[RMDB]
Chemical mapping of a 177-nucleotide RNA with DMS and 2A3. The reactions ran in a buffer of 150 mM KOAc, 10 mM MgCl2 and 150 mM bicine (pH 8.5), at 24 C. For 2A3, 2,098 sequencing reads were counted. Values cover nucleotides 27 to 126. 2A3 adducts were read by reverse transcription with SuperScript II with manganese.
RNA sequence: GGGAACGACUCGAGUAGAGUCGAAAAGGACCGUGUAGCACCGCGUCCGGCCACCAGCCCACUGACGGUUGGUGAGCGGAUAAGGUCCUGAACAGAUGCCCUCCGGGCGUCCACGGCUGACGGUUGAAGAGGUUUAUUGUUUCGACAAUAAACCUCUAAAAGAAACAACAACAACAAC
Reactivity to DMS in 0.01 (KOAc 150mM, MgCl2 10mM, bicine 150mM(pH8.5), 24C), signal-to-noise 3, nucleotides 027 to 126: g000g000a040c020c000g020u000g010u020a060g020c150a230c010c010g000c290g020u000c000c000g000g010c010c000a020c000c020a010g000c000c010c130a180c280u010g010a150c200g000g000u000u000g000g010u000g000a040g000c020g000g000a010u010a040a160g000g000u000c030c010u000g010a090a070c210a140g000a040u000g000c000c000c020u040c230c110g000g000g040c020g040u000c010c010a070c040g000g000c050u000g000a030c030g000g000u000u010g000a160
Reactivity to 2A3 in 0.01 (KOAc 150mM, MgCl2 10mM, bicine 150mM(pH8.5), 24C), signal-to-noise 3, nucleotides 027 to 126: g100g000a020c010c010g020u060g070u110a000g080c060a020c040c060g010c080g000u000c000c000g180g170c020c000a020c000c000a000g020c000c000c020a300c150u220g080a100c070g020g000u000u000g040g000u000g020a040g000c030g010g000a000u010a080a160g000g000u010c000c020u020g010a020a030c030a040g040a010u060g000c000c000c030u130c050c110g060g000g000c000g010u000c010c000a080c020g020g000c000u050g030a010c010g030g000u010u050g000a060